Structure probing data (2A3 and DMS) for a 207-nucleotide construct.
For DMS the reverse transcriptase was MarathonRT.
For 2A3, 1,011 sequencing reads were counted.
Reactivities are given for positions 27 through 156.

RNA sequence: GGGAACGACUCGAGUAGAGUCGAAAAAUUGUUAACUAUGCAUAUUGUGAUGAAUUUACUGAAUCCGACGAUAUAACGGUGGCCGUGGCCGACUAUUUAUAUUGGUCGUCCAAAGAAUUUCGUAGUAGAGACAGAGCCGGAAAUGUGUUUGUCGCUCGACGAUAUCACUAUUCGUAGUGAUAUCGUCAAAAGAAACAACAACAACAAC
Reactivity to 2A3 in 0.01 (KOAc 150mM, MgCl2 10mM, bicine 150mM(pH8.5), 24C), signal-to-noise 3, nucleotides 027 to 156: a020u070u090g030u040u040a060a080c050u060a060u180g030c040a080u070a060u180u080g040u050g030a050u030g020a080a150u090u190u190a120c090u070g070a050a010u020c010c010g040a030c020g050a020u010a020u050a240a000c030g010g000u010g000g000c030c040g050u120g030g010c010c000g020a000c010u030a060u080u220u010a110u060a090u120u090g040g000u000c000g000u000c000c000a060a040a040g060a050a080u040u090u050c020g010u040a030g030u010a010g020a000g010a060c030a020g010a010g040c020c070g050g040a030a090a080u090g020u010g030u040u070u040g040u030c010g000c040u040c020
Reactivity to DMS in 0.01 (KOAc 150mM, MgCl2 10mM, bicine 150mM(pH8.5), 24C), signal-to-noise 1, nucleotides 027 to 156: a070u000u000g010u000u010a160a100c050u000a070u010g000c040a070u000a090u000u000g010u000g020a120u000g010a080a090u000u000u010a140c130u010g010a120a080u020c030c010g020a040c040g020a130u000a010u010a050a040c040g010g050u000g000g030c000c020g040u000g040g070c170c020g000a040c000u000a030u000u000u000a050u000a140u010u000g030g010u000c010g010u000c030c030a020a070a120g000a070a120u000u000u000c040g010u000a140g010u000a120g000a120g000a080c020a080g020a180g020c000c050g010g020a020a080a080u010g020u000g020u000u000u010g040u000c020g030c040u000c060